Structure probing data (2A3 and DMS) for a 177-nucleotide construct. Source: RMDB library OK2TRN, as collected in RNAgym. The RNA was probed in 150 mM KOAc, 10 mM MgCl2 and 150 mM bicine (pH 8.5) at 24 C.

[RMDB]
RNA sequence: GGGAACGACUCGAGUAGAGUCGAAAAAGAUGCUCAAUCCAAGCACCACAGUUAGGAUUGUGCUUUUCCUCAUCAAGUCGUGAAAUGAGGUCACGAAGCUCUCAGAGUGUGGUGUUUACUCUGUAUCGCAGUGCAAUUCGUUCGCGAAUUGCACUGCAAAAGAAACAACAACAACAAC
Reactivity to 2A3 in 0.01 (KOAc 150mM, MgCl2 10mM, bicine 150mM(pH8.5), 24C), signal-to-noise 2, nucleotides 027 to 126: a000g100a010u090g000c000u010c020a020a000u000c010c020a060a000g070c010a000c040c010a030c010a110g130u210u190a030g030g010a010u000u020g000u000g020c040u000u000u000u030c000c040u030c000a060u100c040a020a090g220u070c000g000u010g040a050a050a120u180g060a070g080g070u010c000a000c020g000a050a010g040c040u020c000u010c080a010g010a010g030u030g030u000g030g010u040g000u030u010u030a050c030u000c010u020g090u090a050u160c080
Reactivity to DMS in 0.01 (KOAc 150mM, MgCl2 10mM, bicine 150mM(pH8.5), 24C), signal-to-noise 1, nucleotides 027 to 126: a000g000a020u020g000c030u000c000a020a010u000c000c010a120a230g010c000a010c030c020a050c140a180g000u000u000a190g010g010a000u000u010g000u000g010c010u000u010u000u000c000c020u000c110a080u000c140a130a110g000u000c030g000u000g000a020a070a100u020g020a130g010g020u000c050a030c020g010a090a110g000c110u000c190u110c040a060g020a020g000u000g000u050g010g030u000g030u000u020u010a030c020u000c010u000g000u000a060u010c130
For DMS the reverse transcriptase was MarathonRT.